[RMDB]
RNA sequence: GGGAACGACUCGAGUAGAGUCGAAAAGGGGUCUCCGUGACAAGCGCUAACAGGCUUGGAUUUAUGGGACUGAAGCCUCCACGGUCCCAUUGUCAGCCUGGACCCGCUUGUACGGAGACGGAGGCACCCAAAAUCGCCCAAGUUCGCUUGGGCGAAAGAUGGGCAUUACGUUCGCGUAAUGCCCAUCAAAAGAAACAACAACAACAAC
Reactivity to 2A3 in 0.01 (KOAc 150mM, MgCl2 10mM, bicine 150mM(pH8.5), 24C), signal-to-noise 1, nucleotides 027 to 156: g040g000g020g000u000c010u010c000c000g030u190g130a030c000a000a000g000c010g000c020u070a070a030c000a020g010g030c000u210u300g100g000a000u070u280u160a010u040g010g000g000a000c000u010g050a080a010g020c020c010u040c050c010a040c000g010g010u000c000c000c000a000u000u020g000u000c010a010g040c000c020u020g010g000a020c020c000c000g000c000u000u000g000u000a000c000g010g010a000g000a000c000g000g000a010g000g010c040a040c010c000c010a120a030a000a150u020c000g000c000c000c000a010a040g020u040u070c150g020c170u010u000g000g000g000c010g000a010a000a000

Source: RMDB library RNAMAK, as collected in RNAgym. Chemical mapping of a 207-nucleotide RNA with 2A3. Values cover nucleotides 27 to 156. For 2A3, 1,340 sequencing reads were counted. The reactions ran in a buffer of 150 mM KOAc, 10 mM MgCl2 and 150 mM bicine (pH 8.5), at 24 C. 2A3 adducts were read by reverse transcription with SuperScript II with manganese.